[RMDB]
About this RNA:
The record gives the reactivity of an RNA of 207 nucleotides to DMS and 2A3. The DMS profile rests on 1,370 reads.

RNA sequence: GGGAACGACUCGAGUAGAGUCGAAAAGCUGGCUGGUCAUCUGUCACAUACACUACUGACGUUCUGGCGGUGUAUCGAUCAGUGCCAAACGGAAUCAAGGAGGGACGGCGACGUUAGCGUUGCUGAACCGUCAGCAGACGUAAAAGUUUAGCGAGGGAAUCGUUCUAGCUUUCGAGCUAGAACGAUUAAAAGAAACAACAACAACAAC
Reactivity to DMS in 0.01 (KOAc 150mM, MgCl2 10mM, bicine 150mM(pH8.5), 24C), signal-to-noise 1, nucleotides 027 to 156: g020c020u010g000g060c010u000g010g050u000c040a040u000c110u000g090u000c040a070c010a090u010a020c010a060c030u000a000c050u050g000a130c060g020u000u000c160u000g020g030c010g040g020u000g030u000a230u020c020g000a090u000c080a100g000u000g030c030c020a060a060a140c000g000g040a120a050u050c070a120a060g020g070a140g000g040g080a300c020g020g020c050g000a020c060g060u000u010a150g000c010g040u000u000g000c000u000g010a050a150c000c010g000u020c020a040g050c100a110g000a070c060g000u000a110a020a040a150g050u030u000u020a140g060c060g010a190g000g020g020
Reactivity to 2A3 in 0.01 (KOAc 150mM, MgCl2 10mM, bicine 150mM(pH8.5), 24C), signal-to-noise 2, nucleotides 027 to 156: g050c030u030g020g020c040u060g020g020u080c070a130u030c050u090g090u070c050a020c040a110u200a050c030a040c070u100a040c070u060g060a070c020g080u140u060c110u130g000g050c030g060g000u060g050u040a130u100c050g010a050u060c010a070g150u020g060c010c000a030a060a000c000g050g030a040a110u180c060a030a080g090g000a030g000g060g020a000c000g000g030c020g010a030c050g050u070u120a090g050c060g010u010u000g000c010u010g010a040a060c010c020g040u010c000a000g050c010a010g040a030c050g020u000a040a000a000a180g020u040u070u130a030g000c020g020a080g000g040g000
The 2A3 profile rests on 1,022 reads.